[RMDB]
RNA sequence: GGGAACGACUCGAGUAGAGUCGAAAAAUAGGCUUAUCAAGAGAGGUGGAGGGACUGGGCCGAUGAAACCCGGCAGCCAGAAAUGGUGCCAAUUCAUGCAGCGGAAACGUUGAAAGAUGAGCCGAUGCUACUGUGGUGUUCGCACCACAGAAAAGAAACAACAACAACAAC
Reactivity to 2A3 in 0.01 (KOAc 150mM, MgCl2 10mM, bicine 150mM(pH8.5), 24C), signal-to-noise 5, nucleotides 027 to 129: a000u120a020g000g000c010u030u010a030u080c060a130a010g080a000g000a050g080g060u170g030g050a080g030g000g010a030c040u030g030g000g000c000c000g010a020u050g030a040a060a050c010c000c000g000g000c030a040g160c000c000a000g030a000a020a020u030g000g000u020g000c000c000a010a000u060u030c020a030u070g050c010a020g000c010g030g020a100a020a030c050g060u050u070g030a120a060a010g000a010u000g000a000g010c000c020g010a030u100g030c020u030a070
Reactivity to DMS in 0.01 (KOAc 150mM, MgCl2 10mM, bicine 150mM(pH8.5), 24C), signal-to-noise 4, nucleotides 027 to 129: a120u000a070g000g030c020u000u000a020u000c050a110a110g040a020g000a020g100g000u000g000g000a080g030g020g030a010c000u050g000g000g000c000c060g020a020u040g020a080a070a140c070c090c060g030g000c030a030g050c030c010a020g000a070a070a060u020g010g010u030g000c060c040a030a060u030u050c000a000u000g060c000a040g000c030g010g000a000a060a080c060g070u000u000g030a130a090a090g020a000u010g010a060g000c030c020g010a080u020g040c000u000a080
Structure probing data (2A3 and DMS) for a 170-nucleotide construct.
Source: RMDB library 15KLIB, as collected in RNAgym.
Reactivities are given for positions 27 through 129.
The reactions ran in a buffer of 150 mM KOAc, 10 mM MgCl2 and 150 mM bicine (pH 8.5), at 24 C.
For DMS the reverse transcriptase was MarathonRT.